[RMDB]
RNA sequence: GGGAACGACUCGAGUAGAGUCGAAAAGGGUAGCUUUUUCCCCCCCAUGCCGGGAUUAAACAGUAAUGCACCUCCUAAAAUAAUACAGCUGAGGGGUCAACCUGUAAAGUUCAACUCCCAGCAAAAGCUAUUCUACCGUAUUCGUACGGUAGAAUAGAAAAGAAACAACAACAACAAC
Reactivity to DMS in 0.01 (KOAc 150mM, MgCl2 10mM, bicine 150mM(pH8.5), 24C), signal-to-noise 2, nucleotides 027 to 126: g020g000g020u000a080g000c050u000u000u000u000u010c010c000c020c030c040c000c020a080u000g040c040c060g010g000g010a040u010u010a090a100a050c050a050g000u000a050a110u000g000c070a040c020c010u000c000c020u000a040a080a110a080u010a100a050u010a070c200a090g010c090u010g000a080g020g000g010g020u000c180a090a130c200c020u000g000u010a080a060a110g000u000u020c160a060a080c090u000c000c000c000a030g000c030a030a040a070a080g010
Reactivity to 2A3 in 0.01 (KOAc 150mM, MgCl2 10mM, bicine 150mM(pH8.5), 24C), signal-to-noise 2, nucleotides 027 to 126: g020g010g050u130a040g140c010u080u050u040u110u150c000c000c050c010c010c000c000a010u100g000c000c040g040g010g000a020u100u150a110a190a000c010a000g000u080a140a050u060g050c010a050c030c000u090c010c000u050a050a060a090a000u210a040a170u190a110c110a030g070c080u170g050a100g070g030g000g000u030c000a000a000c010c000u000g070u290a140a000a100g010u020u010c040a010a030c010u000c040c020c010a010g030c000a050a030a020a000g000